[RMDB]
RNA sequence: GGGAACGACUCGAGUAGAGUCGAAAACGUAAAUUGCUGAGUCUACGUAUAUAACAGGUACUUCUAAACCAUCAGUGAGAAUAAGGAGGCUAUUUUAUUGAAUACAGGAAUUUGAAUUAAAGGCUGCCUACUUGUAGUGGUUCGCCACUACAAGUAGAAAAGAAACAACAACAACAAC
Reactivity to 2A3 in 0.01 (KOAc 150mM, MgCl2 10mM, bicine 150mM(pH8.5), 24C), signal-to-noise 1, nucleotides 027 to 126: c020g010u050a000a000a090u090u100g010c020u040g050a050g050u020c020u010a020c050g060u040a050u010a020u040a180a090c070a020g020g030u040a090c010u050u020c010u070a050a110a110c010c000a030u020c010a020g040u000g090a080g060a110a080u130a090a040g070g010a020g030g000c000u060a110u030u060u010u000a100u050u090g020a030a030u080a110c040a040g050g100a060a030u070u080u100g050a060a030u140u080a090a040a030g090g000c020u030g000c000
Reactivity to DMS in 0.01 (KOAc 150mM, MgCl2 10mM, bicine 150mM(pH8.5), 24C), signal-to-noise 3, nucleotides 027 to 126: c050g020u000a020a070a090u010u010g040c040u010g010a100g020u010c050u000a040c060g010u000a120u000a090u010a060a090c120a050g010g000u000a090c090u020u000c050u000a050a080a140c060c020a060u000c050a040g010u000g010a090g000a070a060u010a070a070g000g020a090g010g000c040u000a030u000u000u000u000a080u000u030g010a040a090u000a050c110a060g010g000a060a050u000u000u010g000a050a070u000u000a040a040a120g000g010c030u000g000c150